RNA sequence: GGGAACGACUCGAGUAGAGUCGAAAAAGUCGGGGCUGGCUUUUUGGUUAGCAGCAAUGGAACCCCAACCUCAGGCAUGGUGUAAACGGCUCAGUUUACGCCUCCCAUUAGCUACGCCGUCAGAACCGACAGUUCUUGGAUUCGUCCAAGAACUGUCAAAAGAAACAACAACAACAAC
Reactivity to 2A3 in 0.01 (KOAc 150mM, MgCl2 10mM, bicine 150mM(pH8.5), 24C), signal-to-noise 2, nucleotides 027 to 126: a030g090u050c020g000g030g030g000c030u000g020g030c020u120u070u050u160u170g040g010u020u010a040g060c050a010g020c010a060a050u050g030g050a100a130c000c000c020c020a000a060c030c000u080c080a030g110g000c090a060u120g030g010u010g030u010a000a010a000c020g160g000c090u040c170a020g000u010u020u010a000c010g000c000c000u040c000c000c000a040u080u040a030g020c010u020a010c070g030c020c010g030u060c010a040g020a100a070c010c030
Reactivity to DMS in 0.01 (KOAc 150mM, MgCl2 10mM, bicine 150mM(pH8.5), 24C), signal-to-noise 2, nucleotides 027 to 126: a100g000u000c000g020g020g000g040c050u000g010g000c080u020u020u000u000u010g030g020u000u000a090g050c050a060g020c070a020a030u000g010g020a150a110c050c020c040c050a050a120c120c060u010c130a130g000g010c120a060u000g000g000u010g010u010a030a020a010c000g000g010c240u020c220a160g020u000u000u000a010c030g010c010c010u010c170c000c010a070u000u000a080g000c020u000a040c040g000c030c000g020u000c020a050g000a050a090c120c030